An RNA of 177 nucleotides, treated with 2A3 and DMS and read out base by base. Source: RMDB library OK1LIB, as collected in RNAgym.
RNA sequence: GGGAACGACUCGAGUAGAGUCGAAAAAGAUUUGUCGCAUAGUCUCGACCGAAAUAACAGCAUUCAGAAUGAAGCUCGAAUUAAACGUUACGAAUGGUUUGAUGAAAUGAUGAAUGUAUUAGAAGCGGGAAGGGGAUGUAUUCGUACAUCCCCUUCCAAAAGAAACAACAACAACAAC
Reactivity to 2A3 in 0.01 (KOAc 150mM, MgCl2 10mM, bicine 150mM(pH8.5), 24C), signal-to-noise 3, nucleotides 027 to 126: a020g060a020u120u040u060g030u010c000g030c040a100u040a150g030u030c020u120c090g060a070c030c000g100a020a050a020u210a050a080c080a020g040c000a030u000u000c000a000g000a070a130u170g060a110a050g100c000u000c000g000a000a000u000u100a100a090a030c030g110u140u090a050c140g060a090a010u160g050g080u000u010u040g110a180u050g010a020a070a130u050g000a000u020g000a010a000u000g050u110a080u070u150a040g030a090a040g030c100g020
Reactivity to DMS in 0.01 (KOAc 150mM, MgCl2 10mM, bicine 150mM(pH8.5), 24C), signal-to-noise 2, nucleotides 027 to 126: a080g000a040u000u000u040g000u000c010g010c030a150u000a120g000u000c020u000c020g030a070c040c050g000a010a020a070u030a100a080c200a130g000c050a000u010u010c000a010g000a230a020u010g000a110a230g000c160u000c050g000a060a000u030u000a030a050a260c040g010u000u040a110c180g000a040a150u000g000g000u000u000u000g010a040u000g040a190a020a040u020g000a080u000g000a050a010u000g000u000a130u030u040a050g000a080a150g050c050g000